[RMDB]
RNA sequence: GGGAACGACUCGAGUAGAGUCGAAAAACAGACGCCUGACGCAGGUUUGGCUUUGGAGUGUCGAGACAGAAAAUCUCAGCUAGGGCUGGCCGGGCAGUAGCCGCACCAUCAGGCCGUUGCCUUCGGCGAGUAGCCUAACGUUCGCGUUAGGCUACUCAAAAGAAACAACAACAACAAC
Reactivity to DMS in 0.01 (KOAc 150mM, MgCl2 10mM, bicine 150mM(pH8.5), 24C), signal-to-noise 1, nucleotides 027 to 126: a140c070a170g000a110c260g000c070c130u000g000a030c090g000c010a080g000g020u020u010u000g020g010c010u020u000u000g000g000a030g010u050g020u020c070g000a090g000a080c070a130g010a130a030a110a140u020c020u010c010a170g030c000u030a100g000g010g000c010u020g000g030c060c010g000g000g000c000a080g010u010a030g000c010c010g000c160a060c100c090a080u030c070a070g000g000c020c080g000u010u010g000c050c020u020u010c010g000g000c100
Reactivity to 2A3 in 0.01 (KOAc 150mM, MgCl2 10mM, bicine 150mM(pH8.5), 24C), signal-to-noise 2, nucleotides 027 to 126: a000c030a020g110a030c080g030c000c010u050g020a060c030g000c150a090g030g050u120u200u180g020g030c000u060u090u120g130g040a120g010u100g050u160c050g030a010g030a080c040a020g230a080a050a030a100u040c030u020c030a020g000c010u060a020g000g140g000c010u010g000g040c000c000g010g000g020c020a020g010u070a030g010c010c000g000c000a030c020c000a060u120c030a010g020g000c030c050g020u040u050g040c020c000u050u030c000g000g020c000